Chemical mapping of a 177-nucleotide RNA with DMS and 2A3. The RNA was probed in 150 mM KOAc, 10 mM MgCl2 and 150 mM bicine (pH 8.5) at 24 C. Values cover nucleotides 27 to 126. Source: RMDB library OK2TRN, as collected in RNAgym. 2A3 adducts were read by reverse transcription with SuperScript II with manganese. Reactivities are rounded to 0.1 and cut off at 0 and 3.
RNA sequence: GGGAACGACUCGAGUAGAGUCGAAAAGUACGGUACCUACCAUGAGCUAGGGUACGGAUCGCUGAUCGCUAGGUCAUGGUACGUACGUAGGAUCCAUGGUACGUACAUGUAGUCGUACACUAGACUCCGGGCAAUAUGGUUUCGACCAUAUUGCCCGAAAAGAAACAACAACAACAAC
Reactivity to DMS in 0.01 (KOAc 150mM, MgCl2 10mM, bicine 150mM(pH8.5), 24C), signal-to-noise 3, nucleotides 027 to 126: g020u000a000c020g010g040u000a000c010c210u000a020c010c010a050u000g000a050g010c010u010a030g010g030g050u000a150c150g000g010a060u000c060g010c210u020g000a060u000c000g040c110u010a040g010g000u000c000a010u000g000g010u000a010c290g010u000a010c000g010u000a030g000g000a130u010c040c060a070u010g000g020u000a020c060g020u010a030c050a170u010g020u000a110g000u000c010g010u000a020c020a140c100u010a080g000a090c110u000c110
Reactivity to 2A3 in 0.01 (KOAc 150mM, MgCl2 10mM, bicine 150mM(pH8.5), 24C), signal-to-noise 3, nucleotides 027 to 126: g050u000a000c060g140g040u040a010c010c010u010a010c000c010a020u010g010a000g080c000u020a000g080g140g080u110a060c080g110g040a090u080c170g000c300u180g020a050u030c010g020c170u040a040g040g130u000c000a000u010g020g010u000a000c010g000u020a000c000g000u010a020g040g070a060u070c060c040a060u160g060g000u030a020c020g030u060a000c000a080u190g120u160a040g020u030c010g010u010a020c070a010c020u020a040g060a080c010u010c030